The data come from the RNA Mapping Database (RMDB), library TTRDES.
Structure probing data (2A3 and DMS) for a 177-nucleotide construct.
The reactions ran in a buffer of 150 mM KOAc, 10 mM MgCl2 and 150 mM bicine (pH 8.5), at 24 C.
DMS (dimethyl sulfate) methylates the pairing face of unpaired adenines and cytosines.
For 2A3, 14,854 sequencing reads were counted.
RNA sequence: GGGAACGACUCGAGUAGAGUCGAAAAGAUAUGGAUCCGGCAAGCUUUUGACGGCAUACGGAUCGGAAACGAUCCAGAUGCCGAUAAGCUUGCGGAUCCUAAGUCAAAAGUCAGCUUCGGCUGACAAGAUACUACCCUUGUUCGCAAGGGUAGUAUCAAAAGAAACAACAACAACAAC
Reactivity to 2A3 in 0.01 (KOAc 150mM, MgCl2 10mM, bicine 150mM(pH8.5), 24C), signal-to-noise 5, nucleotides 027 to 126: g020a010u050a020u130g010g000a010u040c040c080g200g250c100a010a010g000c020u130u170u300u300g300a240c160g010g000c000a000u030a050c040g010g010a010u000c010g000g010a040a050a000c000g000a000u020c000c010a070g000a180u020g010c000c010g020a010u030a020a000g000c000u000u000g000c000g010g010a000u000c000c010u000a020a010g010u000c020a080a030a040a120g000u000c000a000g000c000u100u190c300g180g000c000u000g000a000c000a000a010
Reactivity to DMS in 0.01 (KOAc 150mM, MgCl2 10mM, bicine 150mM(pH8.5), 24C), signal-to-noise 5, nucleotides 027 to 126: g000a050u000a300u000g010g010a000u000c010c010g020g070c000a020a010g010c000u010u000u010u010g010a260c160g010g000c000a000u010a110c080g000g020a010u000c000g000g000a100a090a200c000g020a010u000c000c000a230g010a010u000g000c000c000g010a060u000a010a020g010c000u000u000g020c000g000g000a000u000c000c000u000a010a090g000u000c030a110a090a140a150g000u000c000a010g000c010u010u020c250g050g020c010u000g010a000c010a030a070